RNA sequence: GGGAACGACUCGAGUAGAGUCGAAAAUCCCAUAUGUUGGGAGAAGGUUCAGAGACUAUAAUCGGAUGGGCGCAAGCUUAAGGUAUAGUCCACUCCCACUUCGAAAGAGGUGCUAUAAAGCUAUUAAGAAGUUUGCUUACUUCCUAGGGUUUUAUAGGGUUAUUGUCAAGUUCGCUUGACAAUAACCAAAAGAAACAACAACAACAAC
Reactivity to 2A3 in 0.01 (KOAc 150mM, MgCl2 10mM, bicine 150mM(pH8.5), 24C), signal-to-noise 2, nucleotides 027 to 156: u040c010c010c020a030u170a040u120g040u060u060g030g030g040a050g030a190a080g090g000u210u180c150a100g110a080g000a120c000u000a010u050a130a270u070c010g090g080a130u170g150g010g000c020g000c050a060a070g000c010u040u110a160a020g010g010u010a000u010a020g010u000c000c000a010c020u000c000c000c000a020c030u090u090c040g090a100a080a030g020a040g070g020u060g040c010u000a010u010a020a000a000g000c000u010a020u200u070a210a010g030a000a000g010u040u130u120g090c010u070u060a010c000u000u000c000c010u010a020g000g030g020u010u000u000u010a020u010a000g000
Reactivity to DMS in 0.01 (KOAc 150mM, MgCl2 10mM, bicine 150mM(pH8.5), 24C), signal-to-noise 2, nucleotides 027 to 156: u000c010c000c000a110u000a030u000g020u010u010g010g010g020a110g020a160a130g000g010u010u000c060a210g010a210g030a050c010u000a020u000a040a080u000c010g040g010a260u010g000g030g010c030g000c300a080a300g040c040u000u000a150a300g020g000u000a040u000a030g000u000c000c020a100c080u000c010c010c000a030c020u050u000c000g000a120a100a130g010a080g020g000u000g020c010u000a040u000a020a020a020g000c000u010a050u000u000a110a080g000a010a020g000u000u000u020g040c100u010u010a090c010u000u000c000c030u000a150g000g020g020u000u020u000u000a020u000a010g000
About this RNA
The data come from the RNA Mapping Database (RMDB), library ARCHII. The record gives the reactivity of an RNA of 207 nucleotides to 2A3 and DMS. Reactivities are rounded to 0.1 and cut off at 0 and 3. The reactions ran in a buffer of 150 mM KOAc, 10 mM MgCl2 and 150 mM bicine (pH 8.5), at 24 C.